[RMDB]
RNA sequence: GGGAACGACUCGAGUAGAGUCGAAAAGUCCAUGGCUAUGGCUGAUUUUGUGAUACAAAGGCAGAAUUGAGUAGUUGUUAAGAAGACCGUAUGACCUGCAAAGCCUAAAGUAUUUGCUCUCUGAUUCUUUAUAGAUAGUUUGCUAUCUGUGCAGAUACAAUUAAUGGACCUUCGGGUCCAUUAAUUGAAAAGAAACAACAACAACAAC
Reactivity to DMS in 0.01 (KOAc 150mM, MgCl2 10mM, bicine 150mM(pH8.5), 24C), signal-to-noise 2, nucleotides 027 to 156: g010u000c010c010a100u000g020g010c030u010a080u010g010g010c050u000g010a080u000u000u000u000g040u030g000a200u000a170c090a050a080a130g030g020c000a090g010a100a110u000u000g000a140g010u010a110g020u000u000g000u010u000a100a150g000a100a100g030a050c020c020g020u000a050u000g020a050c040c000u000g000c080a070a080a120g000c040c020u000a060a040a120g020u000a080u000u000u000g000c020u010c050u000c050u020g010a110u000u000c020u000u000u000a070u000a050g010a060u000a050g020u000u000u010g050c020u000a040u000c030u000g010u000g090c050a060g010a100u010a130
Reactivity to 2A3 in 0.01 (KOAc 150mM, MgCl2 10mM, bicine 150mM(pH8.5), 24C), signal-to-noise 2, nucleotides 027 to 156: g050u040c020c000a020u040g060g000c050u090a030u050g040g010c000u020g090a100u000u070u100u100g040u030g040a040u040a180c030a020a130a020g010g000c010a000g050a110a100u100u090g040a050g050u070a010g030u030u080g030u050u060a100a110g060a080a040g010a040c010c000g020u080a080u110g040a030c010c010u010g030c030a060a060a040g010c010c010u080a110a030a000g040u030a060u060u080u020g030c030u030c010u000c000u040g010a110u120u040c040u080u080u050a070u010a020g000a010u020a020g040u060u150u220g100c000u000a010u020c000u000g040u020g000c000a000g010a040u050a050
Structure probing data (DMS and 2A3) for a 207-nucleotide construct. For 2A3, 1,043 sequencing reads were counted. For 2A3 the reverse transcriptase was SuperScript II with manganese. For DMS the reverse transcriptase was MarathonRT.